[RMDB]
The data come from the RNA Mapping Database (RMDB), library OK3TST. Chemical mapping of a 207-nucleotide RNA with 2A3 and DMS. For 2A3, 2,847 sequencing reads were counted. The reactions ran in a buffer of 150 mM KOAc, 10 mM MgCl2 and 150 mM bicine (pH 8.5), at 24 C. 2A3 adducts were read by reverse transcription with SuperScript II with manganese.
RNA sequence: GGGAACGACUCGAGUAGAGUCGAAAAGUGAUAACACAUGCCUACAGUCCUAGCUAUUUGGGAGGCUGAGGCAAGGAGGAUCGUCUGAGCCUGUGGGGUUGAGGCUACAGUGAGCUGUGAUCACACCACUACAUGCCAGCCUAUCUAGCCUGGGCAAUACGUAUACGAGUUUCGACUCGUAUACGUAAAAAGAAACAACAACAACAAC
Reactivity to 2A3 in 0.01 (KOAc 150mM, MgCl2 10mM, bicine 150mM(pH8.5), 24C), signal-to-noise 4, nucleotides 027 to 156: g080u060g080a150u180a290a020c050a010c010a100u140g010c010c010u090a140c040a030g020u020c020c020u090a060g000c030u120a120u130u140u100g070g010g000a030g000g020c020u010g030a010g020g020c010a010a010g020g020a020g060g030a150u070c080g050u020c110u040g000a010g020c020c010u020g030u070g030g010g000g010u060u120g030a050g100g050c070u100a020c020a040g020u040g160a060g060c030u010g010u030g090a040u080c010a010c000a010c060c000a110c020u080a040c030a030u110g010c020c010a010g030c020c010u040a040u030c030u040a020g030c000c010u040g000g040g000c010a020a070
Reactivity to DMS in 0.01 (KOAc 150mM, MgCl2 10mM, bicine 150mM(pH8.5), 24C), signal-to-noise 2, nucleotides 027 to 156: g020u020g020a140u000a130a080c050a100c060a140u000g010c020c020u010a180c050a080g000u020c020c010u010a140g040c110u010a100u000u010u020g020g030g000a180g020g070c030u010g030a050g050g040c020a020a130g010g000a160g010g010a080u000c120g050u010c050u010g010a160g020c050c000u020g000u000g030g010g000g040u010u000g020a070g000g050c020u000a020c030a100g030u000g000a060g040c000u000g020u010g000a150u000c070a020c040a060c000c030a020c040u010a070c090a100u000g000c030c010a120g040c000c020u000a050u000c080u000a130g020c030c010u000g030g010g010c060a100a210